[RMDB]
RNA sequence: GGGAACGACUCGAGUAGAGUCGAAAAGUUAAAGUGAGUGCUUUGAAAACAGCCGGCGUUGUGACAGGUAAUGUUGUAAAACAGUGUUGCACUGCUGCUGUUGAUUUAAGUAUGGAUAAGUUGCGCCACCAUAGGCUAGCUUCGGCUAGCCUAUGGUAAAAGAAACAACAACAACAAC
Reactivity to DMS in 0.01 (KOAc 150mM, MgCl2 10mM, bicine 150mM(pH8.5), 24C), signal-to-noise 2, nucleotides 027 to 126: g000u000u000a080a100a130g000u000g000a180g010u000g000c000u000u000u000g010a130a070a010a030c010a020g010c080c090g010g030c010g030u000u000g030u000g000a020c010a050g010g010u000a100a170u000g020u010u010g010u020a050a110a000a020c010a020g010u010g010u000u000g000c010a020c040u000g010c000u000g000c010u000g000u000u000g000a140u000u000u000a010a020g000u010a020u010g010g010a120u000a020a100g010u010u000g000c090g000c110c050